RNA sequence: GGGAACGACUCGAGUAGAGUCGAAAAGAUUCCUCGUUGUUGAGCGAGGUUUAAACAAAUCCACCACACAAACGUAGAGCCGACUACGGAUUUAUAAAUUAAGGCAUUAAGUGUGAUAAGGAGACAAAAAACGAUGUUGUGUUCGCACAACAUCGAAGUACAAGCUUACGUUCGCGUAAGCUUGUACAAAAGAAACAACAACAACAAC
Reactivity to DMS in 0.01 (KOAc 150mM, MgCl2 10mM, bicine 150mM(pH8.5), 24C), signal-to-noise 1, nucleotides 027 to 156: g030a300u020u010c000c000u000c080g060u000u000g090u000u000g010a100g030c020g000a020g000g010u000u000u010a090a180a140c050a120a140a150u000c030c000a210c080c010a000c050a030c010a220a140a120c030g000u020a020g000a260g020c000c040g030a110c000u000a020c000g010g000a140u000u000u000a040u000a030a030a030u000u020a080a050g000g040c000a290u020u000a080a230g010u000g030u000g020a050u020a040a150g000g020a070g000a160c020a000a050a070a050a000a130c000g050a000u000g040u000u000g060u000g030u000u010c300g000c020a030c010a020a020c000a000u000c010g000a000a080
Reactivity to 2A3 in 0.01 (KOAc 150mM, MgCl2 10mM, bicine 150mM(pH8.5), 24C), signal-to-noise 1, nucleotides 027 to 156: g130a050u110u070c000c000u000c020g030u050u050g020u030u050g010a000g020c010g000a000g040g080u080u180u080a020a020a010c060a010a050a000u020c000c020a000c010c000a000c010a020c000a020a170a000c020g000u000a000g000a000g000c000c000g090a000c000u000a000c000g000g010a000u040u300u040a160u150a020a010a010u130u110a000a000g010g040c000a010u140u170a240a070g010u000g000u010g000a010u040a100a000g150g010a070g040a000c110a010a160a000a000a020a000c010g000a000u000g010u000u000g000u000g020u050u030c080g000c060a000c000a000a000c000a000u000c000g010a020a010